[RMDB]
RNA sequence: GGGAACGACUCGAGUAGAGUCGAAAAGGUCAAACCUAAAAGAGCUCGUGUGGAAACCUUGCCUGGGGUGGAAGCAUUAAAACUAAUCAGGAUAGUUUGUCAGUAGCGUGUCCAUCCGCAGCUGGCCGGCGAAUGUAAUGAUUGGACUAAGCAUGUAGAAAUAUAUCUUGUUCGCAAGAUAUAUUUCAAAAGAAACAACAACAACAAC
Reactivity to DMS in 0.01 (KOAc 150mM, MgCl2 10mM, bicine 150mM(pH8.5), 24C), signal-to-noise 2, nucleotides 027 to 156: g020g000u010c040a070a170a210c060c030u000a100a110a090a150g000a100g040c070u000c070g020u000g010u000g000g000a300a100a020c040c030u000u000g020c000c070u000g000g010g010g010u000g010g020a300a160g020c040a120u000u020a040a070a050a150c090u000a020a070u000c040a040g000g010a220u000a030g010u000u000u000g010u000c040a070g030u000a160g010c040g000u000g020u000c040c040a030u000c050c070g010c000a150g000c040u000g000g000c000c030g030g050c000g020a050a060u000g000u000a060a080u000g010a070u000u000g030g010a080c040u000a070a080g020c010a100u000g020u010a130
Reactivity to 2A3 in 0.01 (KOAc 150mM, MgCl2 10mM, bicine 150mM(pH8.5), 24C), signal-to-noise 4, nucleotides 027 to 156: g030g010u100c060a090a090a190c010c020u190a160a090a070a040g090a030g000c060u080c140g060u050g010u040g040g010a060a070a040c000c000u020u070g000c000c010u010g010g000g000g000u010g030g020a020a000g010c010a010u120u180a030a080a060a070c100u160a070a050u170c030a010g010g000a020u010a010g010u010u010u020g010u000c010a000g000u070a050g040c000g000u040g010u000c000c010a010u010c010c000g010c000a020g000c000u020g000g000c010c010g020g000c020g000a000a010u070g020u130a030a040u060g050a010u050u220g010g000a000c020u030a050a060g030c060a050u130g050u120a040

The data come from the RNA Mapping Database (RMDB), library ARCHII. Structure probing data (DMS and 2A3) for a 207-nucleotide construct. For DMS, 2,473 sequencing reads were counted. DMS (dimethyl sulfate) methylates the pairing face of unpaired adenines and cytosines. The 2A3 profile rests on 2,925 reads. For DMS the reverse transcriptase was MarathonRT.